[RMDB]
RNA sequence: GGGAACGACUCGAGUAGAGUCGAAAAUAUCGUGAGACCUGCUCCCGCCUCGGCACAGCUGCCUAUCCACUACUGGGGUCGGGGAUUUAUCAGGUCCCUGUAGGUCUAAGUUUUGACGCCUGGGAGCACCGUUGCGUAGUUUCGACUACGCAACGGUAAAAGAAACAACAACAACAAC
Reactivity to DMS in 0.01 (KOAc 150mM, MgCl2 10mM, bicine 150mM(pH8.5), 24C), signal-to-noise 1, nucleotides 027 to 126: u010a050u020c100g010u010g020a070g000a100c030c020u000g000c020u010c000c020c010g010c030c070u000c040g000g040c050a040c170a110g020c110u000g020c040c010u000a050u000c060c090a140c070u000a100c100u010g030g010g050g000u010c020g000g000g000g000a000u010u010u000a120u010c290a120g000g010u000c000c000c000u000g010u010a040g030g010u000c050u010a060a150g030u000u000u000u000g100a070c090g000c130c080u000g020g000g000a050g010c030
The record gives the reactivity of an RNA of 177 nucleotides to DMS. For DMS the reverse transcriptase was MarathonRT.